[RMDB]
RNA sequence: GGGAACGACUCGAGUAGAGUCGAAAAUUUCGGCCUGUUGACUGAUAAACUGCCUAAUCUGUUGGAUUUCCAAAGUAAAUUGGUGCAAAAAAGCGAUGCGUUGCAAAGCUGGAAUCUGACCAGUGACUACCAUGUAGGUGUUCGCACCUACAUGGUAAAAAGAAACAACAACAACAAC
Reactivity to DMS in 0.01 (KOAc 150mM, MgCl2 10mM, bicine 150mM(pH8.5), 24C), signal-to-noise 3, nucleotides 027 to 126: u000u000u000c050g030g010c050c010u000g020u000u010g020a140c040u000g000a070u000a060a090a100c110u000g010c020c010u000a080a110u010c100u010g020u000u010g010g000a160u000u010u010c020c020a050a050a100g010u010a010a090a080u020u000g020g010u000g010c060a000a070a070a100a060a050g000c030g000a140u000g030c020g010u010u000g010c040a010a060a270g000c000u010g010g000a090a060u000c060u000g000a080c050c050a040g010u010g000a130c150
Reactivity to 2A3 in 0.01 (KOAc 150mM, MgCl2 10mM, bicine 150mM(pH8.5), 24C), signal-to-noise 1, nucleotides 027 to 126: u000u020u050c050g020g050c000c010u050g000u200u090g000a100c060u000g030a000u090a060a110a010c000u020g010c000c020u040a060a160u140c030u110g160u110u000g060g030a050u000u050u120c060c030a090a000a090g020u030a070a290a030u070u070g010g030u100g050c100a060a000a060a030a090a000g000c020g080a010u060g040c060g100u140u020g030c040a010a000a080g010c000u020g010g070a030a080u030c060u030g100a110c020c030a010g010u010g130a030c040
Structure probing data (DMS and 2A3) for a 177-nucleotide construct. For DMS the reverse transcriptase was MarathonRT. Reactivities are given for positions 27 through 126. Reactivities are rounded to 0.1 and cut off at 0 and 3.